[RMDB]
RNA sequence: GGGAACGACUCGAGUAGAGUCGAAAAGGCGCGCGUGAGAGCAUUGUGGCCGGGCGCGGCUUUUGCGCGCGCCGUCAGAGCUGAUUUAGGCGGAAGGCCGCGGCCGGCCACAGGCUUUCCGCCUAAACCGCGAAUCUUGGUUCGCCGGGGUUCGCGGAAAAGAAACAACAACAACAAC
Reactivity to 2A3 in 0.01 (KOAc 150mM, MgCl2 10mM, bicine 150mM(pH8.5), 24C), signal-to-noise 5, nucleotides 027 to 126: g070g010c030g000c020g010c020g100u240g030a010g010a000g010c090a170u080u080g010u010g010g000c000c000g000g010g030c010g000c000g000g000c000u010u020u000u070g060c020g000c000g010c000g000c000c000g000u000c000a020g020a050g010c040u060g020a100u070u050u200a040g000g020c000g000g000a000a000g010g000c000c000g000c000g000g090c000c000g000g000c000c000a000c000a000g000g000c000u000u000u010c000c000g000c000c000u030a060a040a000
Reactivity to DMS in 0.01 (KOAc 150mM, MgCl2 10mM, bicine 150mM(pH8.5), 24C), signal-to-noise 3, nucleotides 027 to 126: g000g010c100g020c230g020c060g020u020g010a020g000a020g000c000a080u010u010g010u000g010g020c000c000g010g000g010c040g010c050g000g010c000u000u000u000u000g010c020g000c000g010c040g020c030c020g010u010c080a070g000a170g020c090u030g000a090u030u030u020a050g000g000c000g010g010a020a010g000g000c000c000g020c040g020g000c000c010g000g000c000c000a000c000a040g000g000c010u000u000u000c000c010g000c000c020u010a020a050a120